[RMDB]
RNA sequence: GGGAACGACUCGAGUAGAGUCGAAAAGGAUUGGGAUAUAGAGUAUCCUUAUAUCUCACAUGAAAAGAAAUUGAAUUCCUGUUGUAGAAUCGUUGAGCGCAACGUCGUACGUGCUGCUCUUCUUGCCGCCCCAUACAGUUCGCUGUAUGGAAAAGAAACAACAACAACAAC
Reactivity to 2A3 in 0.01 (KOAc 150mM, MgCl2 10mM, bicine 150mM(pH8.5), 24C), signal-to-noise 9, nucleotides 027 to 129: g100g040a110u070u050g000g000g000a000u010a010u020a040g150a050g170u150a110u140c010c000u040u010a050u010a010u020c020u070c010a050c030a060u230g100a080a070a030a070g200a040a100a040u230u200g030a070a090u070u050c000c000u030g020u020u050g000u050a060g080a130a080u120c090g010u020u050g010a010g020c010g000c040a120a170c080g080u140c130g110u200a110c010g000u030g020c010u080g010c000u010c000u010u000c020u010u060g060c040c030g040c020c000
Reactivity to DMS in 0.01 (KOAc 150mM, MgCl2 10mM, bicine 150mM(pH8.5), 24C), signal-to-noise 9, nucleotides 027 to 129: g040g020a080u020u010g010g010g000a010u020a030u020a010g000a160g030u040a100u050c100c040u030u020a020u010a020u000c010u030c010a070c200a050u000g010a070a070a100a100g030a030a050a100u050u040g000a090a120u000u000c000c000u040g010u080u000g010u000a060g030a060a080u030c140g030u030u030g000a060g040c040g030c030a020a050c000g040u040c240g000u030a280c040g000u020g000c040u060g020c000u000c020u030u020c030u020u020g000c060c050g010c120c030